[RMDB]
RNA sequence: GGGAACGACUCGAGUAGAGUCGAAAAGGACAAUUGUUCAGGCAUGAAGCCUCCACGUGCGUGCGAAAGCACCCGGAAACGGCUGAGCAAUGUUCCGAGCUGAAGGAGGCACGGCUCAAAAUAAAAAGGUGGUUCAACUGUUCGCAGUUGAACUACCAAAAGAAACAACAACAACAAC
Reactivity to DMS in 0.01 (KOAc 150mM, MgCl2 10mM, bicine 150mM(pH8.5), 24C), signal-to-noise 2, nucleotides 027 to 126: g000g000a000c020a000a020u000u000g000u000u000c000a020g000g040c000a030u000g000a080a100g020c000c010u010c000c000a300c010g000u020g000c020g070u000g000c020g010a190a060a160g020c010a000c000c000c000g000g000a060a080a240c000g000g010c000u010g000a000g000c010a000a010u000g000u000u000c000c100g010a000g020c000u020g000a110a000g000g000a010g000g000c020a300c020g000g000c000u000c010a100a050a060a070u030a020a100a040a090a040
Reactivity to 2A3 in 0.01 (KOAc 150mM, MgCl2 10mM, bicine 150mM(pH8.5), 24C), signal-to-noise 5, nucleotides 027 to 126: g000g000a010c010a030a140u000u000g000u010u000c000a000g000g000c000a000u010g030a080a030g000c000c000u000c000c000a020c000g000u000g000c010g000u000g000c000g050a080a010a010g000c000a000c000c000c000g000g030a040a060a030c000g000g000c000u000g000a000g000c000a000a000u010g010u090u010c010c030g010a000g000c010u020g020a130a010g000g000a000g000g010c010a010c000g000g000c000u000c000a060a080a010a020u190a010a060a020a010a010